RNA sequence: GGGAACGACUCGAGUAGAGUCGAAAAUGCUGUCGUUGAAAGCGCCCAACGCUUCACAACCUGAAAGAAGCGCCUGUUAUCAGGACGGUUGAUCCAUUUACCGGUGCAGACCUCUGCAAACACCGGGUUUAACAAGCAUCUUUCGAGAUGCUUGUAACAUCACAGAAAUGUUCGCAUUUCUGUGAUGAAAAGAAACAACAACAACAAC
Reactivity to DMS in 0.01 (KOAc 150mM, MgCl2 10mM, bicine 150mM(pH8.5), 24C), signal-to-noise 3, nucleotides 027 to 156: u000g020c010u010g050u000c030g020u000u020g040a060a090a100g010c000g030c040c010c030a090a100c000g010c000u020u020c020a110c090a110a210c040c040u010g000a170a200a220g000a030a020g010c000g010c010c010u010g000u020u000a150u010c110a100g010g000a050c050g010g000u000u000g000a160u000c070c030a150u010u000u000a140c010c000g010g020u000g010c000a130g020a190c120c120u010c110u000g020c050a200a120a040c020a020c010c000g000g020g020u000u000u020a050a020c000a000a030g000c000a010u000c000u000u000u010c270g020a040g000a010u010g020c000u010u000g010u000a040a160
Reactivity to 2A3 in 0.01 (KOAc 150mM, MgCl2 10mM, bicine 150mM(pH8.5), 24C), signal-to-noise 4, nucleotides 027 to 156: u100g000c010u020g050u160c070g140u100u160g060a290a020a000g010c020g020c000c020c000a030a010c010g000c000u010u000c020a010c010a090a020c000c000u000g010a020a020a010g000a000a000g020c010g070c010c000u080g050u210u100a160u300c010a000g010g010a010c030g010g000u000u010g010a060u040c040c010a050u070u080u130a080c010c010g000g000u010g000c010a050g100a300c030c080u170c040u110g040c070a060a110a000c030a000c000c010g000g010g000u030u140u020a030a000c000a000a000g000c000a010u010c000u040u120u140c190g080a030g000a020u000g010c000u000u000g000u000a010a000